This 177-nucleotide RNA was probed chemically with DMS. For DMS, 716 sequencing reads were counted. Source: RMDB library OK2TST, as collected in RNAgym.

RNA sequence: GGGAACGACUCGAGUAGAGUCGAAAAGGUCUGGCCGUCGCGGAGAUGGAGGUCCAGAUCGUGCGCAACGACCCGCCGCUACGAUACGACACCAACCUCCCCGUGGAUCUGCUACACAUGGUGUACGAGAGCCAAAGGUGUUCGCACCUUUGGCUCUAAAAGAAACAACAACAACAAC
Reactivity to DMS in 0.01 (KOAc 150mM, MgCl2 10mM, bicine 150mM(pH8.5), 24C), signal-to-noise 1, nucleotides 027 to 126: g010g010u010c050u000g020g000c070c040g020u000c040g000c120g020g020a120g010a060u010g000g000a120g000g020u000c060c100a130g000a000u000c050g010u010g020c140g010c150a180a080c100g000a070c080c010c080g090c080c010g040c030u000a040c010g000a090u020a060c090g020a110c090a070c040c000a050a150c090c020u020c010c020c050c060g000u010g000g020a010u010c000u000g000c090u020a080c050a030c030a090u000g020g030u030g010u020a040c120g000

Conditions: 150 mM KOAc, 10 mM MgCl2 and 150 mM bicine (pH 8.5), 24 C.